Chemical mapping of a 177-nucleotide RNA with 2A3 and DMS. The 2A3 profile rests on 2,039 reads. Source: RMDB library OK2TRN, as collected in RNAgym. 2A3 adducts were read by reverse transcription with SuperScript II with manganese. High DMS reactivity at an A or C suggests that its Watson-Crick edge is free.
[RMDB]
RNA sequence: GGGAACGACUCGAGUAGAGUCGAAAACUUGAGCAGGGCUUGUUAUAUAUGCCUCAGGAGCUUACGGUGUCUGAUAGCGUGCUAGUCUUUGAACUCACGGACAUAGUCCACUGCCGGAUGGCCGCCCGGUAUGGGAGGGAUUCGUCCCUCCCAUACCAAAAGAAACAACAACAACAAC
Reactivity to 2A3 in 0.01 (KOAc 150mM, MgCl2 10mM, bicine 150mM(pH8.5), 24C), signal-to-noise 2, nucleotides 027 to 126: c000u010u080g000a020g070c020a050g020g030g000c020u050u050g100u300u010a080u000a030u010a010u210g040c000c010u040c020a050g070g110a040g020c010u020u050a030c010g050g010u050g010u040c020u050g040a090u020a050g040c020g020u030g020c070u030a030g010u010c040u060u070u110g140a170a120c030u040c140a000c060g000g000a000c010a120u070a020g020u070c040c000a040c070u060g020c050c000g060g000a060u060g100g000c010c010g020c000c000c030
Reactivity to DMS in 0.01 (KOAc 150mM, MgCl2 10mM, bicine 150mM(pH8.5), 24C), signal-to-noise 3, nucleotides 027 to 126: c040u010u010g000a070g050c060a150g020g010g010c020u010u000g010u000u010a060u000a140u020a050u010g010c030c020u000c100a070g010g010a080g000c040u010u000a100c070g020g010u010g010u010c010u000g000a040u000a080g020c040g020u000g000c030u000a040g010u000c000u010u000u000g010a100a130c220u010c060a080c080g010g010a030c070a140u010a060g010u000c060c000a050c050u000g000c030c020g020g000a080u000g000g000c020c030g020c030c030c060